[RMDB]
RNA sequence: GGGAACGACUCGAGUAGAGUCGAAAAUGCUAGCUAGGCCAUGCAGUACCUAGGACUCUAGGUACGGUACACCAUGGGAUCGCGACUCAUGAGUACGUACACGAUCAGUACCUCUAGACAUGGGUACAUACAUACGGAGGUUCGCCUCCGUAUGUAUAAAAGAAACAACAACAACAAC
Reactivity to 2A3 in 0.01 (KOAc 150mM, MgCl2 10mM, bicine 150mM(pH8.5), 24C), signal-to-noise 4, nucleotides 027 to 126: u060g010c020u030a030g010c020u060a040g110g000c030c010a040u100g020c030a030g020u000a010c000c000u010a040g080g130a300c050u040c010u240a010g010g000u010a000c010g020g000u050a030c040a010c050c000a020u020g010g000g090a110u130c090g010c040g150a060c010u010c010a020u080g020a040g100u060a090c100g010u010a000c100a020c030g120a100u090c020a020g010u010a010c020c010u020c040u070a050g020a130c030a100u090g010g000g000u020a030c010
Reactivity to DMS in 0.01 (KOAc 150mM, MgCl2 10mM, bicine 150mM(pH8.5), 24C), signal-to-noise 7, nucleotides 027 to 126: u010g020c030u000a050g010c060u010a100g000g010c060c050a100u010g020c100a130g010u000a010c000c010u010a030g000g010a210c240u010c000u000a020g010g000u000a000c000g000g030u000a050c130a090c120c020a030u010g010g000g010a090u010c110g020c120g020a070c010u000c020a050u000g000a130g030u010a040c120g020u000a050c040a130c150g000a050u010c120a110g000u000a030c010c010u000c080u010a060g010a190c140a050u000g000g010g010u000a020c060